[RMDB]
RNA sequence: GGGAACGACUCGAGUAGAGUCGAAAAUCAAGAAUUGCGACAUGCAGUCAAAUUUCAUAUGGAACGUCCACCACAAGCAAUUAGAGGUCUCAAUUGGGGCAAGGAGUGGACAGGAUCAGUUAUUAGGAAAUGCCAACCAUUUCGAUGGUUGGCAUUUAAAAGAAACAACAACAACAAC
Reactivity to DMS in 0.01 (KOAc 150mM, MgCl2 10mM, bicine 150mM(pH8.5), 24C), signal-to-noise 3, nucleotides 027 to 126: u020c110a110a100g000a020a040u010u000g000c110g010a100c090a060u030g000c140a090g000u000c000a090a140a050u030u000u000c040a140u020a040u070g000g010a120a020c200g000u000c000c050a020c020c030a180c190a050a130g010c070a050a080u010u000a050g010a150g000g030u000c020u000c080a160a230u020u070g010g000g010g010c090a120a090g000g010a110g030u020g000g000a020c000a050g010g030a040u020c040a070g060u040u020a070u000u000a060g000g020
Reactivity to 2A3 in 0.01 (KOAc 150mM, MgCl2 10mM, bicine 150mM(pH8.5), 24C), signal-to-noise 2, nucleotides 027 to 126: u300c000a000a100g030a130a170u060u080g010c000g040a070c150a260u300g000c010a030g080u100c040a030a050a120u000u060u180c200a050u090a040u300g000g000a000a000c040g010u000c030c030a000c010c010a010c010a020a140g000c030a000a000u100u090a130g190a300g100g120u000c090u000c000a000a300u300u100g000g000g000g050c000a070a000g040g020a150g110u050g030g000a010c020a000g000g090a030u160c000a040g060u060u180a130u140u290a010g000g020